[RMDB]
RNA sequence: GGGAACGACUCGAGUAGAGUCGAAAAGAUAUGGAGCCUGAAGAGCGCACACUGUAAAGUCGGAAACGAUGAAGAAGGUGUGAACUACGCUCCAGGCUCCUAAGUCAAACCGUUCUUCGGAACGGAACAUCACCGGAAGGUUCGCCUUCCGGUGAUGAAAAGAAACAACAACAACAAC
Reactivity to 2A3 in 0.01 (KOAc 150mM, MgCl2 10mM, bicine 150mM(pH8.5), 24C), signal-to-noise 1, nucleotides 027 to 126: g030a010u100a090u080g000g000a000g000c010c000u060g110a300a090g020a070g030c030g000c020a000c000a000c030u050g000u030a000a020a040g010u000c000g040g040a030a110a090c000g000a000u010g000a130a300g030a030a010g050g000u020g010u040g000a020a020c060u180a070c050g000c010u030c010c000a010g000g000c000u000c000c010u000a000a010g050u000c000a000a000a130c020c000g010u020u000c000u000u040c250g090g000a000a020c000g010g000a000a000
Reactivity to DMS in 0.01 (KOAc 150mM, MgCl2 10mM, bicine 150mM(pH8.5), 24C), signal-to-noise 1, nucleotides 027 to 126: g010a020u000a300u000g000g000a010g020c040c010u000g010a100a190g000a010g000c000g000c030a000c010a010c030u000g000u000a000a120a300g000u000c000g000g000a140a140a130c000g000a000u000g010a020a030g000a280a270g000g010u040g000u000g000a110a090c110u000a170c000g000c000u000c000c000a020g000g010c000u020c000c010u000a000a040g020u000c060a110a060a190c040c000g060u000u000c000u000u010c230g060g000a010a010c000g020g000a030a150